[RMDB]
RNA sequence: GGGAACGACUCGAGUAGAGUCGAAAAAGGGAGACAUUUUCUCCCGUAGCCAGUAUUUUUCCAUUACGCAUUAGAGUGACACCCACUCCCGAUGCUUUUGUUGCAUCAGGUGCUGUGUUAGCAAACAUCGUGACCACUCAUUCGUGAGUGGUCACGAAAAAGAAACAACAACAACAAC
Reactivity to DMS in 0.01 (KOAc 150mM, MgCl2 10mM, bicine 150mM(pH8.5), 24C), signal-to-noise 1, nucleotides 027 to 126: a170g020g020g000a010g000a050c300a180u010u000u000u000c000u000c000c000c010g010u000a020g000c120c040a060g000u000a030u000u000u000u000u000c100c000a130u010u020a100c050g020c090a050u010u010a090g000a110g020u000g030a110c140a080c100c070c020a060c040u000c020c050c050g000a000u000g000c000u000u010u020u000g010u000u000g010c010a050u000c030a050g000g010u000g000c150u020g040u000g010u010u020a050g020c020a080a100a080c190a130